[RMDB]
RNA sequence: GGGAACGACUCGAGUAGAGUCGAAAAUACUUACCUUGUGUGCCCUUUCUGAAGUGACAGGAUUAGGUCCUGACAUCAUACAAGCUAACUCCAUGUACUCUUUCUAUGGUGAUGAUGAGAUUGUGAGGAGUCACAGGGUAUUCGUACCCUGUGACUCAAAAGAAACAACAACAACAAC
Reactivity to DMS in 0.01 (KOAc 150mM, MgCl2 10mM, bicine 150mM(pH8.5), 24C), signal-to-noise 1, nucleotides 027 to 126: u000a070c110u000u010a090c210c000u000u000g030u000g040u000g000c050c010c020u000u010u010c100u020g010a090a040g000u000g040a120c020a000g000g000a060u010u000a090g010g000u000c020c010u000g000a090c000a020u000c030a030u000a070c060a060a040g020c090u000a010a290c130u000c010c020a110u030g010u000a040c090u000c070u000u000u000c120u000a090u000g000g010u010g030a050u010g000a070u040g010a090g000a090u000u010g010u020g010a070g010
Reactivity to 2A3 in 0.01 (KOAc 150mM, MgCl2 10mM, bicine 150mM(pH8.5), 24C), signal-to-noise 1, nucleotides 027 to 126: u130a070c060u090u080a060c040c040u030u040g020u020g010u050g000c010c000c040u060u150u050c100u090g090a100a020g020u010g060a040c010a030g000g000a000u020u100a160g000g200u030c010c000u000g050a000c020a020u100c000a010u010a100c000a060a000g040c010u060a100a000c050u000c000c050a000u010g030u120a120c000u010c000u180u130u060c120u040a090u080g030g120u120g030a140u050g020a020u010g020a040g080a040u070u080g060u000g030a150g010
Chemical mapping of a 177-nucleotide RNA with DMS and 2A3. Values cover nucleotides 27 to 126. For 2A3, 875 sequencing reads were counted. The RNA was probed in 150 mM KOAc, 10 mM MgCl2 and 150 mM bicine (pH 8.5) at 24 C.